[RMDB]
RNA sequence: GGGAACGACUCGAGUAGAGUCGAAAAUACUUAGUACGCGCGUAGUGGCAGGCAUUCCGGGUGCAGCAACUGACGCGGAAGACUUUUCCCAGAGUGUGCGCUUCAACUGGCGUGCUGAGUAGUGCACGAAUUGCACGUACGUUCGCGUACGUGCAAACUUAUUACACUAAUUCGUUAGUGUAAUAAGAAAAGAAACAACAACAACAAC
Reactivity to DMS in 0.01 (KOAc 150mM, MgCl2 10mM, bicine 150mM(pH8.5), 24C), signal-to-noise 2, nucleotides 027 to 156: u000a050c050u010u000a090g020u000a080c010g020c010g020c080g030u000a050g060u000g020g040c010a120g010g000c020a040u000u010c040c280g030g060g090u000g010c030a300g010c020a060a040c020u000g010a080c030g030c030g000g000a120a100g000a120c070u000u000u000u000c000c010c000a140g000a140g020u000g020u000g010c060g000c020u000u010c040a110a160c120u010g000g010c090g030u000g010c010u000g010a110g000u000a070g030u000g000c030a080c040g010a090a180u000u000g000c010a010c000g000u000a000c030g030u000u010c270g030c050g040u000a010c020g000u000g000c020a000a010a080
Reactivity to 2A3 in 0.01 (KOAc 150mM, MgCl2 10mM, bicine 150mM(pH8.5), 24C), signal-to-noise 5, nucleotides 027 to 156: u080a010c000u010u010a000g000u000a000c010g010c000g010c020g020u030a020g000u030g030g000c080a100g050g040c010a030u070u100c090c130g130g040g030u020g000c030a000g000c000a040a080c060u150g080a090c050g010c040g040g030a030a020g210a160c030u120u160u050u050c000c000c000a010g000a010g010u100g010u020g040c020g010c000u030u050c080a270a230c100u040g040g000c000g000u000g000c000u000g000a000g000u020a010g020u020g020c040a010c060g060a100a110u050u020g000c010a000c000g010u000a000c010g010u020u050c190g000c000g090u000a000c000g000u000g010c000a000a000a010